[RMDB]
RNA sequence: GGGAACGACUCGAGUAGAGUCGAAAAAGGAGGAGUCCUGGCUGAUUCUUGGCGGUGGAGACCGAGCGUCCAGGCCAAGCGUGGCGUCGACAAGGCGUCGGGACAGGAGUGUCGCCGGCACCUGGUCGCAUAAUGAGGGGCGUACGGCUCAGGGCCGGUGUUUGCAAAGGUUCGCCUUUGCAAACACAAAAGAAACAACAACAACAAC
Reactivity to 2A3 in 0.01 (KOAc 150mM, MgCl2 10mM, bicine 150mM(pH8.5), 24C), signal-to-noise 1, nucleotides 027 to 156: a000g060g000a040g030g010a020g030u030c000c050u020g070g000c000u040g020a110u180u000c000u020u090g080g030c010g040g080u080g080g010a020g060a140c040c050g000a030g000c030g010u000c000c000a030g020g100c000c000a110a060g100c120g110u070g000g010c010g030u110c040g020a010c010a040a040g040g000c000g020u020c020g020g000g000a020c020a010g100g080a170g130u120g010u010c180g130c200c000g000g010c000a010c000c010u000g050g010u000c000g000c030a040u070a090a080u170g040a060g040g000g060g000c000g000u040a020c020g050g020c030u030c040a060g000g060g000c000c000g000

An RNA of 207 nucleotides, treated with 2A3 and read out base by base.
For 2A3 the reverse transcriptase was SuperScript II with manganese.